About this RNA: This 177-nucleotide RNA was probed chemically with DMS and 2A3. High 2A3 reactivity points to a flexible backbone, as in loops and unpaired stretches. Conditions: 150 mM KOAc, 10 mM MgCl2 and 150 mM bicine (pH 8.5), 24 C. DMS (dimethyl sulfate) methylates the pairing face of unpaired adenines and cytosines. Values cover nucleotides 27 to 126. The data come from the RNA Mapping Database (RMDB), library OK2TST.

RNA sequence: GGGAACGACUCGAGUAGAGUCGAAAAGAUGCCGUGACUGACGAGAUGAAGAUGAAGGCCACAGGCAAUGGGAUCCAGUUGAUGUCCUUCCAGGAGGUCAUGGAGGUCGGCAAGUCCACCAUGGUCGGAUGCUUGAAUGAUUCGUCAUUCAAGCAUCAAAAGAAACAACAACAACAAC
Reactivity to DMS in 0.01 (KOAc 150mM, MgCl2 10mM, bicine 150mM(pH8.5), 24C), signal-to-noise 4, nucleotides 027 to 126: g020a110u010g030c030c030g040u000g000a070c040u010g000a180c070g010a140g010a100u000g020a090a120g000a100u000g010a100a270g010g000c020c040a040c070a070g020g010c040a040a080u000g000g010g010a100u000c050c020a100g000u020u000g000a080u010g020u000c010c030u000u000c050c070a070g020g000a150g000g010u000c010a020u000g000g000a060g010g010u010c030g020g020c160a070a100g000u000c000c010a080c040c030a030u010g000g010u010c040g000
Reactivity to 2A3 in 0.01 (KOAc 150mM, MgCl2 10mM, bicine 150mM(pH8.5), 24C), signal-to-noise 3, nucleotides 027 to 126: g070a020u080g020c020c020g050u040g030a050c040u040g010a020c030g030a010g060a220u170g090a090a080g090a080u150g010a060a040g030g000c000c020a030c050a060g040g000c010a020a060u120g010g010g010a010u000c020c010a030g030u040u050g060a090u070g030u020c010c010u090u000c030c010a050g010g050a050g000g040u030c010a010u020g010g010a030g000g020u030c010g000g090c120a120a030g040u010c000c010a010c010c000a050u030g020g000u040c050g070